Chemical mapping of a 207-nucleotide RNA with 2A3. The reactions ran in a buffer of 150 mM KOAc, 10 mM MgCl2 and 150 mM bicine (pH 8.5), at 24 C. It was measured as part of the RMDB library VIROID.
[RMDB]
RNA sequence: GGGAACGACUCGAGUAGAGUCGAAAAGUUCGGUACGGCAUGGCGAGGCUUGCCUCGGAGCCAAGCGGGAGGGCUCCCGGGGCGCCGCACGGGCGCAGUGCUGCGCGAGACUCUAUGCCCGUGACUGUUACGGACAAAUUCCGUAACCGUGUAGGCCCUAACCUUAGCGGUUCGCCGCUAAGGUUAGAAAAGAAACAACAACAACAAC
Reactivity to 2A3 in 0.01 (KOAc 150mM, MgCl2 10mM, bicine 150mM(pH8.5), 24C), signal-to-noise 3, nucleotides 027 to 156: g030u050u070c030g000g030u090a060c040g040g000c060a050u100g040g030c020g040a080g030g030c100u110u200g000c040c000u000c010g000g000a010g000c000c020a040a040g090c060g020g020g010a040g020g000g000c000u040c030c080c020g010g000g000g010c010g000c000c000g010c010a010c010g050g030g000c060g010c050a010g010u040g050c050u040g000c040g020c020g030a060g020a070c030u010c010u060a060u130g000c000c030c000g000u020g060a010c020u020g000u010u000a010c010g000g010a010c140a140a200a120u250u000c000c000g000u000a000a010c010c010g010u030g040u090a090g080g000c030c000